[RMDB]
RNA sequence: GGGAACGACUCGAGUAGAGUCGAAAAAAUUGGCGGGGGAGCACUACAACCGGAGGAGCCUGCGGUUUAAUUGGACUCAACGCCGGACAUCUCACCAGCAUCGACAGCAGGAGUGACGAUCAGGUUGAUUGUCAGUAUCGUUCGCGAUACUGACAAUAAAAGAAACAACAACAACAAC
Reactivity to 2A3 in 0.01 (KOAc 150mM, MgCl2 10mM, bicine 150mM(pH8.5), 24C), signal-to-noise 2, nucleotides 027 to 126: a000a020u040u130g020g010c040g010g000g000g030g010a010g020c040a020c050u210a100c040a040a020c000c010g020g060a000g010g020a030g150c010c010u110g040c030g010g030u060u110u060a100a120u020u130g110g070a080c020u020c050a010a060c040g010c000c000g020g040a010c010a020u020c040u010c010a090c000c000a000g010c010a040u020c060g070a060c010a030g000c000a020g030g060a050g000u040g000a030c060g010a030u030c020a000g100g000u060u060g120
Reactivity to DMS in 0.01 (KOAc 150mM, MgCl2 10mM, bicine 150mM(pH8.5), 24C), signal-to-noise 2, nucleotides 027 to 126: a000a020u020u020g010g040c070g010g010g020g000g010a060g000c190a030c060u000a070c150a070a070c050c040g030g000a140g010g000a160g030c060c020u000g040c030g000g000u000u030u010a060a140u020u010g000g000a090c050u040c050a120a070c050g020c010c020g010g000a050c110a120u000c070u010c060a070c070c050a050g020c060a080u020c040g000a050c080a020g000c010a120g000g010a110g010u000g000a050c040g000a040u010c060a160g010g000u000u000g000
Notes:
The record gives the reactivity of an RNA of 177 nucleotides to 2A3 and DMS. The data come from the RNA Mapping Database (RMDB), libraries RFM100 and RFMREP. DMS adducts were read by reverse transcription with MarathonRT. As a SHAPE reagent, 2A3 marks flexible, mostly unpaired nucleotides at the ribose 2'-OH. 2A3 adducts were read by reverse transcription with SuperScript II with manganese.